The record gives the reactivity of an RNA of 177 nucleotides to 2A3.
Source: RMDB library OK1LIB, as collected in RNAgym.
The RNA was probed in 150 mM KOAc, 10 mM MgCl2 and 150 mM bicine (pH 8.5) at 24 C.
As a SHAPE reagent, 2A3 marks flexible, mostly unpaired nucleotides at the ribose 2'-OH.
RNA sequence: GGGAACGACUCGAGUAGAGUCGAAAAUAAGGCAUGACCCGUCUACUAUCUAAUCAUAAUGCUAAUGAAUGUCAUAGCGCCUCGGAGCAGAAGGAAUUCGACGAGAGUCGUGCCAAGAGGGAGGCGGCUGCAGCCCGGAUUUCGAUCCGGGCUGCAGAAAAGAAACAACAACAACAAC
Reactivity to 2A3 in 0.01 (KOAc 150mM, MgCl2 10mM, bicine 150mM(pH8.5), 24C), signal-to-noise 1, nucleotides 027 to 126: u300a010a000g000g000c000a000u000g040a140c000c000c040g040u000c000u100a080c010u010a030u040c000u090a000a190u040c040a060u010a210a040u100g040c040u080a300a000u160g020a150a150u190g120u160c000a040u030a000g000c050g000c040c000u040c100g060g000a020g060c040a010g030a020a020g000g070a000a260u100u180c010g000a000c000g020a000g000a000g300u020c020g000u000g000c000c000a000a030g110a000g000g100g040a030g000g010c030g030g040